Chemical mapping of a 207-nucleotide RNA with DMS and 2A3.
For 2A3 the reverse transcriptase was SuperScript II with manganese.
DMS adducts were read by reverse transcription with MarathonRT.
For 2A3, 744 sequencing reads were counted.
The DMS profile rests on 2,870 reads.
High 2A3 reactivity points to a flexible backbone, as in loops and unpaired stretches.
Reactivities are rounded to 0.1 and cut off at 0 and 3.

[RMDB]
RNA sequence: GGGAACGACUCGAGUAGAGUCGAAAAUGGCCGAAAGUUAUAAGCCAGCUCUUGCCGAAGGCUCAGGGCGUUCGCAGACCUGUCGCAUGGUCAUCAUCGUCAGCAGUGUGGCCUCAGUGGAGCUGACCAUUGACACCACAACAGUGAUGGCGACGCAUAAGGAGCAUCCAUUCGUGGAUGCUCCUUAAAAAGAAACAACAACAACAAC
Reactivity to DMS in 0.01 (KOAc 150mM, MgCl2 10mM, bicine 150mM(pH8.5), 24C), signal-to-noise 2, nucleotides 027 to 156: u020g020g010c020c000g020a110a050a080g010u000u010a130u010a090a140g040c000c010a120g000c020u000c040u010u000g050c030c040g010a100a100g000g020c000u000c010a120g030g030g010c010g010u000u000c090g020c060a140g020a080c080c000u010g000u000c050g000c050a180u000g010g070u010c040a050u000c030a050u000c050g020u000c000a080g000c060a190g030u000g000u010g000g040c030c120u010c020a040g010u000g020g010a140g000c130u000g010a170c000c010a000u020u000g020a010c080a040c040c000a000c020a050a100c060a110g020u000g020a050u000g000g020c030g000a040c020g040c080a240
Reactivity to 2A3 in 0.01 (KOAc 150mM, MgCl2 10mM, bicine 150mM(pH8.5), 24C), signal-to-noise 2, nucleotides 027 to 156: u120g040g000c080c020g030a090a130a000g030u090u170a090u030a150a000g000c000c000a030g010c000u010c030u090u180g080c080c060g000a150a030g000g040c010u010c060a050g080g040g050c010g040u160u160c020g000c020a020g000a000c020c020u100g050u100c040g000c080a020u080g000g010u040c000a000u080c020a010u070c000g080u010c030a050g000c040a070g080u030g040u120g040g020c060c030u010c030a030g000u000g010g000a000g010c090u010g030a040c000c000a000u010u000g020a020c030a030c050c020a040c030a080a100c010a030g010u060g020a110u050g020g030c020g010a010c000g030c010a010